[RMDB]
RNA sequence: GGGAACGACUCGAGUAGAGUCGAAAACGCGCCACGUUGAGAAGCUGAGCGUCACCGCAGCCCAUCGCCGUAGAUCGGCCGGACAGUGCGCCGUGGUAGACCGUGCUGUGCAUCAUGCGGCCAUCGAACCGAGAGGAUAUUUCGAUAUCCUCUCGGUAAAAGAAACAACAACAACAAC
Reactivity to DMS in 0.01 (KOAc 150mM, MgCl2 10mM, bicine 150mM(pH8.5), 24C), signal-to-noise 5, nucleotides 027 to 126: c120g030c110g000c020c030a060c100g020u000u000g000a100g000a140a110g010c020u000g010a120g000c050g000u000c060a080c070c030g010c060a090g000c020c020c000a110u000c110g020c040c050g020u010a110g020a070u000c130g020g010c010c050g010g000a070c070a050g020u000g000c050g010c040c060g010u000g010g010u000a100g010a090c090c040g000u000g000c010u000g020u010g000c090a060u010c120a110u000g000c020g010g000c010c060a060u000c050g010a150
Reactivity to 2A3 in 0.01 (KOAc 150mM, MgCl2 10mM, bicine 150mM(pH8.5), 24C), signal-to-noise 4, nucleotides 027 to 126: c020g000c000g010c010c020a060c030g040u060u140g110a080g010a120a010g020c060u050g040a020g020c020g050u060c020a020c040c040g000c030a010g020c040c000c010a040u080c060g050c040c030g030u030a020g030a160u080c100g030g000c030c010g050g020a040c020a030g010u020g040c020g010c020c030g020u070g060g050u080a060g050a050c040c010g020u040g000c010u040g020u040g050c020a080u060c000a030u200g030c000g000g000c000c000a080u080c030g030a010